Description
Chemical mapping of a 177-nucleotide RNA with DMS and 2A3. The DMS profile rests on 22,894 reads. The reactions ran in a buffer of 150 mM KOAc, 10 mM MgCl2 and 150 mM bicine (pH 8.5), at 24 C.
RNA sequence: GGGAACGACUCGAGUAGAGUCGAAAACCUUCCUUCUUCGGUGAUCCCGUCUCUCCUGUUCGGUGAACCCUCCCGGGUGUUUCCUCUUCCUAGGUCCGGAGUCGACCUCCAUCUGAUCCGUCCUGGCCUACUAUGUAAAGUUCGCUUUACAUAGUAGAAAAGAAACAACAACAACAAC
Reactivity to DMS in 0.01 (KOAc 150mM, MgCl2 10mM, bicine 150mM(pH8.5), 24C), signal-to-noise 8, nucleotides 027 to 126: c030c020u000u000c030c020u000u000c050u000u000c070g010g010u000g000a100u000c030c020c020g010u000c040u000c040u000c020c030u000g010u000u000c050g020g010u000g000a100a130c070c030c020u000c030c030c060g010g010g020u000g000u000u000u000c020c010u000c050u010u000c020c030u000a070g010g010u000c040c060g010g000a070g010u000c050g010a080c050c010u000c030c030a070u000c060u010g010a110u000c040c050g010u000c030c010u000g010g010c160
Reactivity to 2A3 in 0.01 (KOAc 150mM, MgCl2 10mM, bicine 150mM(pH8.5), 24C), signal-to-noise 4, nucleotides 027 to 126: c010c000u040u070c020c000u050u090c020u060u070c030g040g020u040g050a080u040c010c000c020g040u010c020u010c010u020c020c010u040g040u100u090c030g020g060u040g090a100a070c000c010c010u040c010c030c020g020g010g020u050g010u010u090u030c010c010u020c000u050u020c000c010u030a040g000g040u000c030c030g040g020a040g030u040c030g020a040c000c000u000c010c010a070u040c040u070g030a040u020c020c000g020u010c000c010u010g020g000c000